[RMDB]
RNA sequence: GGGAACGACUCGAGUAGAGUCGAAAAUUCGCGCGGUUUUUUGAUGCAUGCGUCGGCGUGGACUGCGACCUCGUGAAAGUGGCCAUCUGCAAGCACAACGCCUCGCUGUACGGGGUCCGCGACCAGGAAUACGCAGUGACUUCGGUCACUGCGUAUUAAAAGAAACAACAACAACAAC
Reactivity to DMS in 0.01 (KOAc 150mM, MgCl2 10mM, bicine 150mM(pH8.5), 24C), signal-to-noise 2, nucleotides 027 to 126: u000u000c000g000c020g020c030g000g010u010u000u010u020u060u000g020a070u000g020c060a040u040g000c060g010u020c050g030g010c050g020u000g000g000a060c050u020g030c030g000a070c000c020u010c030g020u020g000a050a150a110g030u020g010g000c050c110a040u010c070u030g010c170a100a100g030c110a110c110a130a040c100g010c000c010u000c060g050c000u000g000u010a070c000g000g010g000g010u000c000c000g050c020g000a120c130c070a100g070g020
Reactivity to 2A3 in 0.01 (KOAc 150mM, MgCl2 10mM, bicine 150mM(pH8.5), 24C), signal-to-noise 3, nucleotides 027 to 126: u080u030c050g000c040g000c060g010g040u050u000u010u000u070u140g070a080u040g020c000a020u140g040c020g110u050c100g060g010c070g030u050g010g030a050c040u040g000c040g010a050c000c010u010c000g040u070g100a190a150a090g030u050g050g060c040c040a150u050c060u110g000c060a120a060g040c040a060c030a120a020c120g000c010c000u010c040g020c020u010g010u030a010c010g000g070g030g000u070c060c100g000c000g020a070c010c050a030g040g080